An RNA of 177 nucleotides, treated with DMS and 2A3 and read out base by base. For DMS the reverse transcriptase was MarathonRT. The DMS profile rests on 7,937 reads.
RNA sequence: GGGAACGACUCGAGUAGAGUCGAAAACGGACGCCACCUUCGAGAGUACCCCAGGCCUUGAGGGGAAGAGCGAGACAACUGCGCCACUGGCACUCCCAGCUCCAGUGUAUGAGGCUGGUUCUGACGGAACCAGAAGGGAGUUCGCUCCCUUCUGGUUAAAAGAAACAACAACAACAAC
Reactivity to DMS in 0.01 (KOAc 150mM, MgCl2 10mM, bicine 150mM(pH8.5), 24C), signal-to-noise 6, nucleotides 027 to 126: c100g010g000a110c080g030c020c050a080c030c030u010u010c030g020a050g020a170g020u010a140c070c010c000c030a090g010g000c040c020u000u000g010a070g010g000g000g020a050a090g000a090g010c040g010a090g000a090c110a060a080c070u000g000c040g000c050c030a050c070u000g000g000c110a080c070u010c050c000c010a100g010c050u010c020c010a040g010u010g000u010a090u000g000a070g000g000c020u000g000g000u000u000c020u010g010a140c150g010g010
Reactivity to 2A3 in 0.01 (KOAc 150mM, MgCl2 10mM, bicine 150mM(pH8.5), 24C), signal-to-noise 2, nucleotides 027 to 126: c030g010g060a010c060g020c040c000a040c010c010u010u030c040g070a060g000a030g070u170a150c030c000c000c000a040g000g080c040c000u030u050g040a080g010g020g020g030a070a060g020a040g030c040g010a020g030a050c090a120a040c080u100g010c010g030c030c020a050c050u040g030g000c010a040c060u020c000c010c000a010g010c030u000c020c000a040g020u030g010u120a240u210g070a060g150g000c020u000g000g020u050u030c050u040g060a040c060g030g040

Conditions: 150 mM KOAc, 10 mM MgCl2 and 150 mM bicine (pH 8.5), 24 C. Reactivities are given for positions 27 through 126.